Conditions: 150 mM KOAc, 10 mM MgCl2 and 150 mM bicine (pH 8.5), 24 C.
This 177-nucleotide RNA was probed chemically with 2A3 and DMS.
Reactivities are rounded to 0.1 and cut off at 0 and 3.

[RMDB]
RNA sequence: GGGAACGACUCGAGUAGAGUCGAAAAGUUAUGGAAAACGUCUUAGCUACCACUACAACAACAAUGCUGGACGGUGAUGGUUCGACUUACUCGAAAGCAUCACGUAGUGGUAGUCGUUCCCAUUCAACAAUUCGUCUCAAUUCGUUGAGACGAAUUGAAAAGAAACAACAACAACAAC
Reactivity to 2A3 in 0.01 (KOAc 150mM, MgCl2 10mM, bicine 150mM(pH8.5), 24C), signal-to-noise 6, nucleotides 027 to 126: g040u070u090a090u260g140g070a060a080a010a030c020g030u000c040u180u250a040g000c010u030a040c000c020a030c030u080a020c030a210a000c010a050a010c020a080a120u150g010c020u010g020g010a010c030g020g020u040g040a070u140g050g120u030u040c020g000a010c020u020u040a010c010u020c010g020a060a060a000g020c020a040u070c030a010c070g050u060a020g020u010g000g000u010a000g000u000c010g000u000u000c000c000c000a010u070u090c020a030a050
Reactivity to DMS in 0.01 (KOAc 150mM, MgCl2 10mM, bicine 150mM(pH8.5), 24C), signal-to-noise 4, nucleotides 027 to 126: g020u010u010a090u000g030g010a110a110a100a070c030g000u000c000u000u000a080g000c020u000a040c020c010a030c010u010a030c030a110a080c190a080a060c230a050a070u000g010c010u000g010g010a090c080g010g000u000g020a050u000g010g020u000u000c040g000a060c050u000u000a010c030u000c000g000a090a050a040g000c120a080u000c110a100c120g000u000a020g010u010g000g040u000a000g000u000c000g010u000u000c010c010c000a100u000u000c120a080a150
For DMS, 3,767 sequencing reads were counted.